[RMDB]
RNA sequence: GGGAACGACUCGAGUAGAGUCGAAAAGUAAGAUGAUUCGUCAUCUUACGAACCGGAUGAAGCGGCACAUACCGAGCUUCAUACAUCUAAGAGUGCAAAUAAUGGCGCGUGGUUUCGACCACGCGAAAGUGGCUUACUACUUCGGUAGUAAGCCACUAAAAGAAACAACAACAACAAC
Reactivity to 2A3 in 0.01 (KOAc 150mM, MgCl2 10mM, bicine 150mM(pH8.5), 24C), signal-to-noise 1, nucleotides 027 to 126: g000u020a000a000g060a010u000g010a030u040u080c120g030u030c160a000u000c000u000u000a000c000g000a000a090c020c010g010g000a010u070g000a010a000g000c030g050g110c070a010c010a150u210a080c060c130g040a010g050c010u010u000c030a000u010a050c070a110u060c040u180a100a020g080a060g130u060g000c060a000a060a060u140a060a130u300g220g000c040g000c000g000u000g000g000u030u000u050c220g080a010c020c000a000c030g000c000g000a000a000
Reactivity to DMS in 0.01 (KOAc 150mM, MgCl2 10mM, bicine 150mM(pH8.5), 24C), signal-to-noise 1, nucleotides 027 to 126: g000u000a000a020g000a000u010g020a040u040u030c140g000u000c000a030u000c000u000u000a010c000g010a020a170c080c000g000g000a020u000g000a000a000g000c020g030g040c020a000c070a110u000a150c090c160g030a210g000c000u010u000c000a020u000a080c180a170u020c150u020a070a070g000a080g000u000g000c000a120a080a070u030a070a120u040g040g040c000g000c000g020u000g000g000u000u000u000c160g010a020c000c000a000c000g000c010g020a000a030

Chemical mapping of a 177-nucleotide RNA with 2A3 and DMS. 2A3 adducts were read by reverse transcription with SuperScript II with manganese. For DMS, 659 sequencing reads were counted.